An RNA of 177 nucleotides, treated with 2A3 and DMS and read out base by base. High DMS reactivity at an A or C suggests that its Watson-Crick edge is free. For 2A3, 1,729 sequencing reads were counted. The RNA was probed in 150 mM KOAc, 10 mM MgCl2 and 150 mM bicine (pH 8.5) at 24 C. Reactivities are given for positions 27 through 126.
[RMDB]
RNA sequence: GGGAACGACUCGAGUAGAGUCGAAAACAACGGAGGUGCCGCCGGCACGCGAGCUCUGGCAGCCCGUCGCGGAGCCGGAGGGCUACUCGCGCGACGACCUCGGGUGUGCGGAGCCCGCUGCGCUGCAAGUGCUCCGGAGUUUCGACUCCGGAGCACUAAAAGAAACAACAACAACAAC
Reactivity to 2A3 in 0.01 (KOAc 150mM, MgCl2 10mM, bicine 150mM(pH8.5), 24C), signal-to-noise 2, nucleotides 027 to 126: c070a020a050c010g060g010a050g020g080u050g010c030c030g030c040c040g050g050c010a000c040g040c020g000a030g010c000u000c010u040g080g000c020a040g020c010c010c020g040u010c010g000c010g000g010a000g000c030c000g160g020a170g040g030g050c020u120a100c020u060c070g120c000g010c020g050a040c020g060a080c020c110u080c070g010g000g000u020g000u000g000c000g000g000a000g000c000c000c030g000c020u030g000c080g020c010u020g030c020a030
Reactivity to DMS in 0.01 (KOAc 150mM, MgCl2 10mM, bicine 150mM(pH8.5), 24C), signal-to-noise 1, nucleotides 027 to 126: c060a040a300c080g000g000a040g020g000u010g020c030c000g030c150c000g000g020c010a010c160g010c050g000a210g000c000u000c040u010g000g000c000a110g000c000c000c000g020u000c000g000c010g000g000a160g000c020c020g000g000a120g000g000g000c020u010a110c140u050c020g000c090g000c050g000a040c030g020a180c090c120u040c120g000g000g000u000g000u000g000c010g000g000a020g000c020c000c020g010c030u020g000c040g060c020u000g000c090a120